[RMDB]
RNA sequence: GGGAACGACUCGAGUAGAGUCGAAAACAAUCUAAGCAAAAAUGUGAUCUUGGUUGUAAAUACAAUUUUGAGAGGUUAAUAAAUUACAAGUAGUGCUAUUUUUGUCCCUCUCUGCAAUAAAAUUAAACUUCACUUGUUUAUUCGUAAACAAGUGAAGAAAAGAAACAACAACAACAAC
Reactivity to DMS in 0.01 (KOAc 150mM, MgCl2 10mM, bicine 150mM(pH8.5), 24C), signal-to-noise 1, nucleotides 027 to 126: c030a070a040u010c040u000a090a110g040c080a020a090a050a140a050u010g030u010g000a110u000c020u020u010g000g010u010u000g010u000a030a150a080u010a090c070a100a060u000u000u050u010g010a020g010a010g000g000u000u020a090a090u000a020a030a010u000u000a040c040a040a120g020u010a060g010u000g040c130u000a020u000u000u000u000u000g000u000c190c000c000u000c000u000c030u010g000c120a030a090u030a020a050a060a060u010u000a060a070a080
Reactivity to 2A3 in 0.01 (KOAc 150mM, MgCl2 10mM, bicine 150mM(pH8.5), 24C), signal-to-noise 2, nucleotides 027 to 126: c000a000a020u040c040u300a000a020g030c040a110a120a160a210a180u160g140u130g130a050u050c020u020u030g000g000u020u040g020u070a030a090a000u160a050c070a050a160u150u100u150u010g020a040g000a010g000g030u030u210a020a010u050a030a090a030u010u090a000c010a040a030g100u050a050g050u240g140c000u050a050u040u080u030u060u080g080u060c030c000c000u000c000u000c020u000g000c010a040a070u090a240a130a010a000u090u070a020a080a020